[RMDB]
RNA sequence: GGGAACGACUCGAGUAGAGUCGAAAAGAUAUGGAAAUCGUAACAUCAGUGAUCCACAGGGAGCCUGUUCGGUCGGAAACGACCGGUAGGGCAUCGAUCUGUGGAUCACUGUGGAUUUCCUAAGUCACUGCAAUUACUACUUCGGUAGUAAUUGCAGAAAAGAAACAACAACAACAAC
Reactivity to DMS in 0.01 (KOAc 150mM, MgCl2 10mM, bicine 150mM(pH8.5), 24C), signal-to-noise 1, nucleotides 027 to 126: g000a010u010a300u030g000g010a020a000a000u000c010g020u000a130a300c300a120u010c020a020g000u000g000a010u000c010c000a000c000a060g000g000g020a020g060c000c000u040g050u020u000c010g000g000u000c000g000g000a060a090a080c020g000a010c000c000g000g000u020a170g020g010g000c010a220u000c250g020a000u010c010u000g000u000g020g010a000u000c000a000c010u000g010u010g020g000a020u000u000u020c020c010u030a000a100g000u030c020a290